[RMDB]
RNA sequence: GGGAACGACUCGAGUAGAGUCGAAAAGAUUGAUAGGAUGAAAUUGCAGUUUUCACUGGGUUCCAUAGGCGGACUAAGUCUCCACAUUAAGAUCAAUGGUGUAAUCAGCAAACGGCUGUUUGCUCAACGUAUGUUCUCGGUUCGCCGAGAACAUACGAAAAGAAACAACAACAACAAC
Reactivity to DMS in 0.01 (KOAc 150mM, MgCl2 10mM, bicine 150mM(pH8.5), 24C), signal-to-noise 3, nucleotides 027 to 126: g010a110u010u000g010a050u030a040g010g000a090u010g000a040a080a050u030u010g030c000a030g000u020u040u000u010c040a070c050u020g020g000g000u030u000c010c020a140u030a130g000g030c100g020g020a080c050u000a040a150g010u010c050u010c000c020a090c140a080u040u050a110a070g000a050u000c060a090a040u020g000g020u010g000u010a050a030u030c030a020g000c040a030a060a050c110g010g010c150u020g000u000u000u000g020c000u000c080a000a110
Reactivity to 2A3 in 0.01 (KOAc 150mM, MgCl2 10mM, bicine 150mM(pH8.5), 24C), signal-to-noise 4, nucleotides 027 to 126: g130a040u090u160g020a040u120a090g100g030a060u080g060a060a010a090u120u130g070c050a040g060u030u010u030u140c080a040c080u040g050g060g000u070u000c020c010a040u090a060g090g000c090g010g020a030c040u060a040a050g050u030c000u010c050c000a040c010a050u090u200a100a040g060a160u060c070a050a090u070g050g010u020g020u090a020a060u040c020a000g020c030a030a000a190c030g260g050c130u090g000u060u030u040g020c020u030c050a060a130
An RNA of 177 nucleotides, treated with DMS and 2A3 and read out base by base. Values cover nucleotides 27 to 126. The RNA was probed in 150 mM KOAc, 10 mM MgCl2 and 150 mM bicine (pH 8.5) at 24 C. For 2A3 the reverse transcriptase was SuperScript II with manganese. The 2A3 profile rests on 2,480 reads. For DMS, 3,740 sequencing reads were counted.